[RMDB]
RNA sequence: GGGAACGACUCGAGUAGAGUCGAAAAGAUAUGGAGAGUCACAUCAUGCCUAUAAUCUCGGAAACGAGGUAGGCAGAUGUGAGCUCUCCUAAGUCAAAAGGUCCUUCCGCUUCGGCGGAAGGACCAAGUCAAAGGGUAACUUCGGUUACCCUUUGACAAAAGAAACAACAACAACAAC
Reactivity to DMS in 0.01 (KOAc 150mM, MgCl2 10mM, bicine 150mM(pH8.5), 24C), signal-to-noise 1, nucleotides 027 to 126: g000a050u000a300u000g000g020a000g010a010g010u000c000a000c000a000u010c000a110u000g020c000c000u010a070u000a300a140u010c000u000c000g010g030a090a090a230c020g010a010g020g010u000a010g000g010c000a000g000a020u020g000u000g000a040g000c000u000c000u000c000c010u000a010a120g010u000c040a060a020a130a100g010g020u000c000c000u000u000c000c000g000c000u000u020c260g030g000c020g000g020a000a020g020g020a000c000c010a000a000